[RMDB]
RNA sequence: GGGAACGACUCGAGUAGAGUCGAAAAGAUAUGGAGUUCUCUCCUAGUGCCUACAGGGAGUCCGAAAUGUCGGAAACGACAUAUAAGGACGACGAUCUGUAGGCACUAGGAGAGGAACUCCUAAGUCCAUUACGGAUUACUUCGGUAAUCCGUAAUGAAAAGAAACAACAACAACAAC
Reactivity to DMS in 0.01 (KOAc 150mM, MgCl2 10mM, bicine 150mM(pH8.5), 24C), signal-to-noise 4, nucleotides 027 to 126: g010a100u000a300u000g010g000a040g020u000u000c010u000c000u000c000c000u000a000g010u000g000c010c000u010a000c000a020g000g030g010a060g030u000c010c000g000a150a150a010u000g030u000c000g010g010a140a090a220c010g010a010c000a000u000a020u010a090a300g000g000a010c000g010a080c300g010a030u000c000u000g010u010a000g000g010c000a000c000u000a000g000g000a020g000a010g000g000a010a000c000u000c000c000u010a000a100g000u000c050

The record gives the reactivity of an RNA of 177 nucleotides to DMS.
For DMS, 3,455 sequencing reads were counted.
Values cover nucleotides 27 to 126.
DMS adducts were read by reverse transcription with MarathonRT.
Values are in units of 0.01, from 0 to 300, in steps of 10.
Source: RMDB library TTRINS, as collected in RNAgym.
The RNA was probed in 150 mM KOAc, 10 mM MgCl2 and 150 mM bicine (pH 8.5) at 24 C.